This 207-nucleotide RNA was probed chemically with 2A3. The 2A3 profile rests on 1,190 reads. Reactivities are given for positions 27 through 156.
RNA sequence: GGGAACGACUCGAGUAGAGUCGAAAAGAACGUCGCAAUGACGUAAGGUGGGACUUUUCCUUCUGGAACCAAGCGGUUGGUUCCGAGGGGGGUGUGAUCCAGGUACCGCCGUAGAAACUGGAUUACGACGUCUACCCGGGAUUCAAACCCGGUCCCCGUUGAACCUCUAGUUCGCUAGAGGUUCAACAAAAGAAACAACAACAACAAC
Reactivity to 2A3 in 0.01 (KOAc 150mM, MgCl2 10mM, bicine 150mM(pH8.5), 24C), signal-to-noise 2, nucleotides 027 to 156: g130a080a000c000g000u020c000g020c190a200a300u300g030a030c020g010u030a010a030g090g030u110g010g000g000a010c030u030u080u090u190c000c010u040u040c190u160g000g010a000a000c000c000a030a030g130c100g220g210u070u030g000g000u000u000c010c010g010a010g000g000g040g000g010g000u040g000u020g000a020u000c020c020a000g000g010u040a000c000c000g000c000c020g030u010a040g090a030a190a040c070u100g030g030a050u050u040a000c030g030a000c020g000u020c010u010a030c000c000c030g060g000g000a060u280u150c080a100a030a110c030c000c010g000g010u040c000c000c010c000